[RMDB]
RNA sequence: GGGAACGACUCGAGUAGAGUCGAAAAUAAAAUUGUAACAGGGGAUGAGGAUUGGAUUUAAUUGUUUUAGGGACUACGCCUGUUGCAAGGGGGUUCCUAGUCGGAGUUGACAUUGGAUGUCCACUUCCAACAGAGAAGGAUUCGUCCUUCUCUGUUGAAAAGAAACAACAACAACAAC
Reactivity to 2A3 in 0.01 (KOAc 150mM, MgCl2 10mM, bicine 150mM(pH8.5), 24C), signal-to-noise 5, nucleotides 027 to 126: u090a000a030a000a030u050u040g030u020a020a020c020a040g030g020g020g030a040u090g040a040g040g020a030u040u080g030g010a030u060u110u150a090a070u120u120g120u080u110u030u080a050g050g000g020a010c010u120a070c080g160c050c010u020g010u040u050g010c020a000a010g000g000g000g000g000u000u000c000c000u020a050g060u080c070g010g000a000g000u010u020g010a010c010a030u070u190g280g080a050u030g030u000c020c010a010c010u020u000c020
Reactivity to DMS in 0.01 (KOAc 150mM, MgCl2 10mM, bicine 150mM(pH8.5), 24C), signal-to-noise 9, nucleotides 027 to 126: u010a050a050a060a080u000u010g010u000a040a050c060a060g010g000g010g000a100u000g010a060g010g010a120u000u000g010g010a070u000u000u000a070a100u010u010g010u000u000u010u000a070g010g010g010a060c030u000a130c100g000c010c000u000g000u000u010g000c090a050a020g010g010g010g000g010u000u000c000c010u000a040g010u010c150g010g010a030g010u000u000g000a020c050a050u000u010g010g020a300u000g010u000c010c070a040c040u000u000c040
This 177-nucleotide RNA was probed chemically with 2A3 and DMS. The 2A3 profile rests on 8,870 reads. The reactions ran in a buffer of 150 mM KOAc, 10 mM MgCl2 and 150 mM bicine (pH 8.5), at 24 C. For DMS, 23,179 sequencing reads were counted. For DMS the reverse transcriptase was MarathonRT.